RNA sequence: GGGAACGACUCGAGUAGAGUCGAAAACAAGAAGUUCCCGGAGGGAUCCAAGAGACGGAUGACUUUCCCCCAUUGGUUGGGAAAAGUCCCGGAACCAGGAAAUGGGAAAGAGACGGUAGAAAAGAGCGAGCGAGAACCUUCGGGUUCUCGAAAAGAAACAACAACAACAAC
Reactivity to 2A3 in 0.01 (KOAc 150mM, MgCl2 10mM, bicine 150mM(pH8.5), 24C), signal-to-noise 4, nucleotides 027 to 129: c040a020a050g180a080a010g040u030u030c000c000c000g000g010a010g000g040g020a030u030c030c020a080a000g010a000g000a040c030g000g000a050u080g000a030c030u000u000u020c030c010c000c010c000a100u090u240g110g030u060u070g020g000g000a060a100a010a030g040u000c000c000c000g010g010a020a030c020c020a010g040g030a010a080a080u140g020g000g000a020a060a000g040a000g010a000c030g000g040u080a050g090a040a080a010a000g090a010g020c030g010a020g040
Reactivity to DMS in 0.01 (KOAc 150mM, MgCl2 10mM, bicine 150mM(pH8.5), 24C), signal-to-noise 6, nucleotides 027 to 129: c070a060a070g000a080a160g020u050u000c000c000c040g080g010a070g050g000g020a070u000c040c050a090a070g030a110g020a100c120g020g030a120u060g010a030c000u000u000u000c030c040c010c080c100a180u060u050g000g000u010u010g000g000g000a050a030a070a040g010u010c010c040c070g030g040a110a080c090c040a100g060g010a040a080a110u000g030g020g020a000a000a000g010a040g020a000c090g000g030u040a090g020a070a090a060a040g020a060g020c070g020a100g000
Record summary
The record gives the reactivity of an RNA of 170 nucleotides to 2A3 and DMS. For 2A3 the reverse transcriptase was SuperScript II with manganese. The data come from the RNA Mapping Database (RMDB), library 15KLIB. The reactions ran in a buffer of 150 mM KOAc, 10 mM MgCl2 and 150 mM bicine (pH 8.5), at 24 C. For DMS, 15,535 sequencing reads were counted. Reactivities are given for positions 27 through 129. For DMS the reverse transcriptase was MarathonRT.